The record gives the reactivity of an RNA of 177 nucleotides to 2A3 and DMS. For 2A3, 8,142 sequencing reads were counted.
RNA sequence: GGGAACGACUCGAGUAGAGUCGAAAAGAUAUGGAGUAGCUUGGACCCUGAGGACACAUCGAUCUCGGAAACGAGGGAGUGUCCCAGGCUAGCUACUCCUAAGUCAAAAGGGUGGUUCGCCACCCAAUCAUCAACUAUCGUUCGCGAUAGUUGAUGAAAAAGAAACAACAACAACAAC
Reactivity to 2A3 in 0.01 (KOAc 150mM, MgCl2 10mM, bicine 150mM(pH8.5), 24C), signal-to-noise 4, nucleotides 027 to 126: g030a010u070a040u170g010g000a010g010u010a000g010c030u080u160g120g140a300c060c000c000u060g070a300g100g000a000c010a000c010a180u300c060g090a130u020c010u000c010g030g050a090a110a080c020g000a010g020g010g010a030g000u000g000u000c010c010c000a000g000g000c000u000a010g000c010u000a000c000u000c000c000u000a000a000g010u000c010a000a000a070a180g000g020g000u020g010g030u050u140c190g070c070c000a000c000c000c000a000a030
Reactivity to DMS in 0.01 (KOAc 150mM, MgCl2 10mM, bicine 150mM(pH8.5), 24C), signal-to-noise 4, nucleotides 027 to 126: g010a040u000a300u010g010g020a010g020u000a000g010c020u000u000g020g000a120c300c020c010u000g000a130g020g000a000c010a010c000a300u010c170g000a070u000c000u010c000g000g000a100a070a170c010g000a020g000g000g000a030g010u000g010u000c000c000c000a010g000g000c020u000a000g010c000u010a000c000u000c000c000u000a000a080g010u000c020a080a090a100a160g000g000g020u010g000g010u000u010c220g000c000c000a000c000c000c000a010a020